RNA sequence: GGGAACGACUCGAGUAGAGUCGAAAAGAUAUGGAGCCACGGAAUUGCUCGACACUCGGAAACGAGUGCGAGCGGAGAUGUGGGCUCCUAAGUCAAACCAGGUAGUCUGUUCGCAGACUACCUGGAACGAUGCUAAAAAGUUCGCUUUUUAGCAUCGAAAAGAAACAACAACAACAAC
Reactivity to DMS in 0.01 (KOAc 150mM, MgCl2 10mM, bicine 150mM(pH8.5), 24C), signal-to-noise 5, nucleotides 027 to 126: g000a020u010a110u010g000g000a010g010c010c000a010c000g000g000a120a100u000u010g020c000u000c000g000a160c000a000c000u010c010g010g000a030a020a060c000g000a010g020u000g010c000g000a020g020c000g010g010a050g010a300u020g000u000g010g010g020c000u010c000c000u000a000a050g000u000c010a110a110a240c010c000a000g000g010u000a010g010u000c000u000g010u000u010c230g010c010a010g000a020c000u000a000c000c000u000g000g010a010a040
Reactivity to 2A3 in 0.01 (KOAc 150mM, MgCl2 10mM, bicine 150mM(pH8.5), 24C), signal-to-noise 6, nucleotides 027 to 126: g010a000u030a020u060g000g000a000g020c000c000a000c010g010g110a090a090u300u300g010c010u030c010g110a130c050a000c000u000c000g000g030a030a020a020c000g000a000g000u010g000c000g000a000g060c020g040g220a040g000a000u050g010u040g080g120g010c000u000c010c000u000a010a000g010u000c020a030a040a140c000c000a000g000g000u000a000g000u000c010u020g070u080u110c300g000c160a000g000a000c010u000a000c000c000u000g000g000a000a000

An RNA of 177 nucleotides, treated with DMS and 2A3 and read out base by base. DMS (dimethyl sulfate) methylates the pairing face of unpaired adenines and cytosines. It was measured as part of the RMDB library TTRDEL. The DMS profile rests on 9,379 reads. For 2A3, 15,775 sequencing reads were counted. The RNA was probed in 150 mM KOAc, 10 mM MgCl2 and 150 mM bicine (pH 8.5) at 24 C. Reactivities are given for positions 27 through 126.